[RMDB]
RNA sequence: GGGAACGACUCGAGUAGAGUCGAAAAUUUGUUCAUCAUAAAAGCCCUGUGAGGUAGAGCACAUUGUUCUCAUUUUGCAGAGGAGGAAAGUAAGGCUCAGAGACCUUAAAUGAGUUGACAGUGCUGGCUGGGCGCGGUGGGUGGCUCACGCCUGUAACAAAAUUAGUAGGUUCGCCUACUAAUUUUGAAAAGAAACAACAACAACAAC
Reactivity to 2A3 in 0.01 (KOAc 150mM, MgCl2 10mM, bicine 150mM(pH8.5), 24C), signal-to-noise 3, nucleotides 027 to 156: u050u050u070g010u050u100c020a110u030c010a010u220a140a170a030a030g030c010c000c030u050g050u050g020a070g010g070u110a040g000a030g050c060a010c050a130u070u160g020u070u010c020u000c020a060u000u110u090u090g050c050a010g010a020g050g020a010g020g030a030a020a020g050u110a040a040g010g000c030u030c050a020g020a040g020a110c010c000u050u040a050a060a040u100g020a040g030u080u090g080a050c030a030g010u020g050c010u030g060g000c010u010g000g030g000c050g000c040g020g070u080g020g070g020u020g060g000c010u000c010a010c090g000c000c000u030g030u060a070a040
Reactivity to DMS in 0.01 (KOAc 150mM, MgCl2 10mM, bicine 150mM(pH8.5), 24C), signal-to-noise 2, nucleotides 027 to 156: u000u000u020g000u000u000c030a100u010c040a110u000a090a110a170a160g020c010c010c000u020g030u010g020a100g030g020u000a050g010a110g010c090a070c070a090u010u000g010u000u010c030u010c030a150u000u000u000u000g040c050a110g000a150g000g030a090g020g000a100a080a070g000u000a040a050g010g030c020u010c020a120g020a190g000a060c020c020u000u000a030a070a100u000g000a060g040u000u000g000a060c050a120g040u010g010c040u010g010g030c080u000g030g010g030c040g030c050g000g020u000g010g010g010u000g020g010c020u000c030a040c050g010c030c010u000g020u010a080a220